An RNA of 177 nucleotides, treated with DMS and 2A3 and read out base by base. Reactivities are given for positions 27 through 126. The reactions ran in a buffer of 150 mM KOAc, 10 mM MgCl2 and 150 mM bicine (pH 8.5), at 24 C. For 2A3 the reverse transcriptase was SuperScript II with manganese. Source: RMDB library TTRINS, as collected in RNAgym.
RNA sequence: GGGAACGACUCGAGUAGAGUCGAAAAGAUAUGGAAGUUCACCUUCUUUGAUCGUGGGUGAAGAAGCCAAUGGUCGGAAACGACCAUUGGUGUAAAGCCCACGGGAGAAGAUGAACUUCCUAAGUCAUCAAUUAUAGAUGUUCGCAUCUAUAAUUGAAAAAGAAACAACAACAACAAC
Reactivity to DMS in 0.01 (KOAc 150mM, MgCl2 10mM, bicine 150mM(pH8.5), 24C), signal-to-noise 7, nucleotides 027 to 126: g010a030u000a190u000g000g000a020a010g000u000u000c000a000c020c000u000u000c000u000u000u010g020a070u010c010g010u000g010g020g000u000g000a050a160g000a250a300g000c000c010a010a000u010g010g010u000c000g020g000a040a050a120c000g020a000c000c000a000u000u000g000g020u000g010u000a000a110a300g000c000c000c000a000c000g000g000g000a010g010a030a010g000a020u000g000a000a000c000u000u000c000c000u010a000a060g010u000c020a290
Reactivity to 2A3 in 0.01 (KOAc 150mM, MgCl2 10mM, bicine 150mM(pH8.5), 24C), signal-to-noise 3, nucleotides 027 to 126: g010a010u050a040u110g010g000a000a010g010u010u000c010a010c020c000u050u000c020u300u300u100g120a150u190c010g000u020g000g010g010u060g060a190a300g020a030a000g100c000c000a000a010u000g030g000u000c010g010g030a080a060a100c010g000a000c000c010a010u000u000g000g000u000g000u010a010a000a000g020c000c000c000a010c000g000g010g000a020g010a000a000g010a000u010g000a000a000c000u010u000c000c000u000a050a000g050u010c020a080